Chemical mapping of a 177-nucleotide RNA with DMS and 2A3.
The RNA was probed in 150 mM KOAc, 10 mM MgCl2 and 150 mM bicine (pH 8.5) at 24 C.
DMS adducts were read by reverse transcription with MarathonRT.
For 2A3, 54,933 sequencing reads were counted.
Reactivities are given for positions 27 through 126.

RNA sequence: GGGAACGACUCGAGUAGAGUCGAAAAGGGUGUACCCGCUCACUGCGAUAACCACGGAACGGCAUAGACCUUGCAGGGCGUGCAGCACGUGCUCGAUGAGCGUCUUGCCACAGACUCUCAGCGUGGGUACCAUUUAAUGGUUCGCCAUUAAAUGGUAAAAAGAAACAACAACAACAAC
Reactivity to DMS in 0.01 (KOAc 150mM, MgCl2 10mM, bicine 150mM(pH8.5), 24C), signal-to-noise 9, nucleotides 027 to 126: g010g010g010u000g010u020a090c040c020c010g010c030u000c050a070c060u020g010c060g020a070u030a080a120c100c030a060c070g000g010a110a100c140g010g000c030a040u030a060g010a060c030c020u000u010g010c300a100g010g000g010c020g020u000g010c060a100g010c110a150c050g000u010g010c020u020c030g000a100u020g000a030g000c140g000u000c010u000u010g000c040c040a090c130a070g010a080c060u000c020u000c030a080g010c040g020u010g000g000g020
Reactivity to 2A3 in 0.01 (KOAc 150mM, MgCl2 10mM, bicine 150mM(pH8.5), 24C), signal-to-noise 9, nucleotides 027 to 126: g060g000g000u080g030u090a060c010c000c000g010c000u020c010a070c030u100g030c030g090a100u080a170a070c020c010a020c040g040g040a120a040c060g020g000c020a050u120a150g070a130c000c010u040u090g040c090a080g000g040g000c020g030u050g020c050a050g070c030a030c080g040u060g030c010u030c050g150a160u130g020a010g010c050g000u000c000u010u060g080c010c010a020c000a010g040a020c010u020c000u010c060a030g020c010g030u030g000g030g010